This 177-nucleotide RNA was probed chemically with DMS and 2A3. Reactivities are given for positions 27 through 126. The data come from the RNA Mapping Database (RMDB), library OK1LIB. The DMS profile rests on 6,463 reads. The RNA was probed in 150 mM KOAc, 10 mM MgCl2 and 150 mM bicine (pH 8.5) at 24 C.
[RMDB]
RNA sequence: GGGAACGACUCGAGUAGAGUCGAAAACCGACGGCGUCGUGAUCGACGGCACCGCGGCAAUCGACAUGAGCGCGAUGACCGGUGAGUCCAAACCGGUGCGCGCCACUGCGGACGCGCCCGUCAUCGGACGAUUUAAUGACUUCGGUCAUUAAAUCGUAAAAGAAACAACAACAACAAC
Reactivity to DMS in 0.01 (KOAc 150mM, MgCl2 10mM, bicine 150mM(pH8.5), 24C), signal-to-noise 4, nucleotides 027 to 126: c010c000g010a100c090g010g000c040g020u000c010g000u020g010a120u020c210g010a040c040g010g000c000a090c150c000g050c030g000g000c060a090a150u010c030g000a100c050a090u010g010a160g000c020g000c000g020a050u020g010a030c000c030g010g010u000g000a160g000u070c190c180a040a180a060c040c010g000g010u010g010c000g000c050g010c010c000a050c140u010g020c070g000g000a060c030g030c220g020c030c000c040g000u010c010a030u020c050g010g010
Reactivity to 2A3 in 0.01 (KOAc 150mM, MgCl2 10mM, bicine 150mM(pH8.5), 24C), signal-to-noise 8, nucleotides 027 to 126: c010c010g030a090c020g050g070c030g020u060c010g040u080g100a230u180c140g080a020c000g010g010c020a010c010c000g000c000g000g000c070a060a120u090c020g090a080c050a060u160g040a070g040c030g010c010g040a040u080g170a030c010c000g010g000u030g030a050g140u070c060c060a100a060a020c020c010g010g000u020g000c040g000c000g000c000c000a020c020u120g010c010g000g020a030c010g010c000g030c030c010c010g040u030c010a040u040c010g040g040